[RMDB]
RNA sequence: GGGAACGACUCGAGUAGAGUCGAAAAGGAUGUUUGCAUUCUUGCGUCAAUGCAAACAUGAUUGGCUUCGUCGACAAUUGACGCAAGAAUUGUCGGUCAAGCGGCACAAUGACCGACGAAGCCAAGACUAACUGCAUUGUGCCGCUUGUGGUUAGGAGUACCUAUUUACGUUCGCGUAAAUAGGUACAAAAGAAACAACAACAACAAC
Reactivity to 2A3 in 0.01 (KOAc 150mM, MgCl2 10mM, bicine 150mM(pH8.5), 24C), signal-to-noise 1, nucleotides 027 to 156: g100g000a040u090g010u030u050u070g000c000a020u000u000c120u010u040g010c040g020u010c000a000a030u030g020c020a050a150a050c040a080u060g040a170u030u100g000g000c000u000u000c000g000u020c110g070a030c090a180a130u030u060g000a010c000g000c040a000a010g020a010a050u090u090g140u090c040g000g070u040c000a000a000g000c010g000g020c000a000c000a010a020u030g050a080c010c080g000a000c010g050a000a000g000c000c010a020a010g040a010c010u100a010a020c030u050g020c020a000u000u000g000u030g000c090c000g000c000u000u000g000u010g000g040u100u080a050g040g010a100
Reactivity to DMS in 0.01 (KOAc 150mM, MgCl2 10mM, bicine 150mM(pH8.5), 24C), signal-to-noise 1, nucleotides 027 to 156: g030g010a020u000g000u000u000u010g020c000a060u000u000c050u000u020g030c000g010u000c000a110a070u000g040c020a030a040a070c070a090u010g000a160u000u000g010g010c010u000u000c000g020u000c000g050a140c080a150a100u000u000g010a030c000g010c000a030a150g020a070a060u000u000g010u000c050g000g010u000c020a020a040g020c010g030g000c020a050c030a050a070u000g010a160c130c020g000a040c010g000a030a040g010c010c010a050a070g010a120c120u000a080a070c130u000g030c000a010u000u000g000u000g000c020c020g010c000u000u000g000u020g060g000u000u000a110g010g020a300
Conditions: 150 mM KOAc, 10 mM MgCl2 and 150 mM bicine (pH 8.5), 24 C. Chemical mapping of a 207-nucleotide RNA with 2A3 and DMS. For 2A3, 890 sequencing reads were counted. The data come from the RNA Mapping Database (RMDB), library OK3TST.